[RMDB]
RNA sequence: GGGAACGACUCGAGUAGAGUCGAAAAGAUAUGGAAGGCAGUAUCUGAACGUUUAUGGGAGAUCCCUGUCGGAAACGACAGUGCGAUCGAAGAACAUACUGACGUUCAGAUACUGCCUUCCUAAGUCGACCAAAAAGUAGUUCGCUACUUUUUGGUCAAAAGAAACAACAACAACAAC
Reactivity to DMS in 0.01 (KOAc 150mM, MgCl2 10mM, bicine 150mM(pH8.5), 24C), signal-to-noise 3, nucleotides 027 to 126: g020a120u000a300u020g000g010a020a020g010g000c010a010g010u000a000u010c000u000g000a010a010c010g000u000u000u000a010u000g000g000g000a170g000a010u000c000c030c000u000g040u010c000g040g000a120a140a220c000g030a020c000a000g000u000g060c200g000a010u000c000g030a060a150g000a150a240c010a010u000a030c300u000g000a010c010g000u000u000c000a010g010a010u000a000c000u000g000c000c000u000u000c000c000u000a000a090g000u010c080

Source information: Chemical mapping of a 177-nucleotide RNA with DMS. Values cover nucleotides 27 to 126. Source: RMDB library TTRINS, as collected in RNAgym. Conditions: 150 mM KOAc, 10 mM MgCl2 and 150 mM bicine (pH 8.5), 24 C.